Structure probing data (2A3 and DMS) for a 177-nucleotide construct. For 2A3, 1,499 sequencing reads were counted. For 2A3 the reverse transcriptase was SuperScript II with manganese. The reactions ran in a buffer of 150 mM KOAc, 10 mM MgCl2 and 150 mM bicine (pH 8.5), at 24 C.
RNA sequence: GGGAACGACUCGAGUAGAGUCGAAAAAUUAGGUUUAGUCAUGAAUAUGGAUGUUAGUCUCCAUAGACAUAGGCUCUCUCUUAAGGAGUUGAUGAUGUAUGCCGCUGAUCCAGCCAUGCACAUUGCCCUAGGAUAAAUCGUUCGCGAUUUAUCCUAGAAAAGAAACAACAACAACAAC
Reactivity to 2A3 in 0.01 (KOAc 150mM, MgCl2 10mM, bicine 150mM(pH8.5), 24C), signal-to-noise 1, nucleotides 027 to 126: a020u090u050a060g000g060u030u060u080a030g000u010c010a000u000g020a050a050u020a000u020g010g010a010u070g120u160u150a070g040u060c010u000c000c010a020u000a000g010a040c020a020u070a150g020g000c000u010c000u000c010u000c000u020u070a060a060g080g060a060g070u160u100g060a050u010g030a040u030g000u040a000u020g130c140c060g070c030u020g020a140u070c110c010a000g010c020c010a000u020g020c010a000c020a050u000u070g000c030c010
Reactivity to DMS in 0.01 (KOAc 150mM, MgCl2 10mM, bicine 150mM(pH8.5), 24C), signal-to-noise 3, nucleotides 027 to 126: a070u000u000a030g010g020u000u010u000a010g030u000c010a040u010g010a030a180u000a010u000g000g010a030u010g020u010u010a170g010u000c120u000c010c000a000u000a010g010a300c010a030u000a100g010g010c000u000c070u000c050u010c010u000u000a050a090g010g010a190g010u000u000g000a020u010g010a100u010g020u000a020u000g000c190c160g010c020u010g000a140u000c180c060a040g030c010c010a020u000g010c020a020c020a030u000u000g000c070c020